[RMDB]
RNA sequence: GGGAACGACUCGAGUAGAGUCGAAAAUUCGCGUAAGCAGGAAGAUUUCAUAGUCCAUCGACAACCCGAACGUCAUCGCCAGGACCAGCGGGGGAACGGUGCUGUCGAUCGAAUGAAGCGCCGGGAACCCCGUCCGCAUGUUCGCAUGCGGACGGGGAAAAGAAACAACAACAACAAC
Reactivity to 2A3 in 0.01 (KOAc 150mM, MgCl2 10mM, bicine 150mM(pH8.5), 24C), signal-to-noise 3, nucleotides 027 to 126: u030u000c040g000c030g030u100a090a020g070c020a010g010g150a160a100g030a110u070u120u060c070a050u070a060g060u000c030c020a090u060c060g050a060c020a100a110c000c020c030g020a070a020c050g090u020c020a060u060c000g000c000c040a000g020g080a050c000c000a010g080c010g000g000g000g010g030a000a090c020g000g010u010g000c020u050g130u090c020g060a160u070c060g050a000a030u150g020a060a000g000c020g000c000c000g000g000g020a020a020
Reactivity to DMS in 0.01 (KOAc 150mM, MgCl2 10mM, bicine 150mM(pH8.5), 24C), signal-to-noise 2, nucleotides 027 to 126: u030u000c060g020c060g000u000a090a150g000c060a000g020g000a100a070g000a090u010u010u040c040a050u030a070g020u000c060c020a030u000c020g000a030c030a090a050c100c000c050g030a130a050c070g010u030c020a120u010c070g000c010c020a120g050g000a100c100c070a140g010c030g020g000g000g000g000a210a240c030g000g000u000g000c010u000g040u000c030g000a110u040c230g000a080a060u030g010a130a000g000c020g030c000c010g000g000g000a140a250